An RNA of 177 nucleotides, treated with DMS and 2A3 and read out base by base. The RNA was probed in 150 mM KOAc, 10 mM MgCl2 and 150 mM bicine (pH 8.5) at 24 C. Source: RMDB library OK2TRN, as collected in RNAgym.
[RMDB]
RNA sequence: GGGAACGACUCGAGUAGAGUCGAAAAUUGAGAACUAUUGAUUGGUAAUAGCAAUUAUGGUCAUUAUGAACCUAGUGGGGAAUGGGUAUGAGCUGGUUACUUUGAUGACAACCAAAUAUGAACACCAUAGUGCGUAGGUAUUCGUACCUACGCACUAAAAAGAAACAACAACAACAAC
Reactivity to DMS in 0.01 (KOAc 150mM, MgCl2 10mM, bicine 150mM(pH8.5), 24C), signal-to-noise 2, nucleotides 027 to 126: u000u000g010a190g010a120a140c040u000a090u040u000g020a190u020u000g010g030u010a060a100u000a100g000c030a050a080u000u000a060u000g010g000u000c040a090u030u010a050u000g000a160a070c020c020u010a050g020u000g000g000g030g000a120a100u000g000g000g010u010a070u000g000a090g020c010u000g000g010u010u000a030c060u000u000u010g000a060u000g010a060c080a050a060c020c070a060a030a110u020a080u000g020a090a030c160a040c080c040a140
Reactivity to 2A3 in 0.01 (KOAc 150mM, MgCl2 10mM, bicine 150mM(pH8.5), 24C), signal-to-noise 1, nucleotides 027 to 126: u100u070g020a050g060a040a020c030u040a030u130u090g000a010u050u110g040g020u200a080a080u010a240g000c010a010a040u080u000a050u220g020g000u010c010a030u050u100a030u140g020a000a030c010c040u060a070g040u100g080g080g000g070a120a020u040g020g000g000u080a100u150g100a000g020c050u050g080g020u110u000a090c030u130u080u090g060a100u060g010a010c040a050a030c030c080a000a080a000u270a030u090g070a120a000c080a020c090c000a000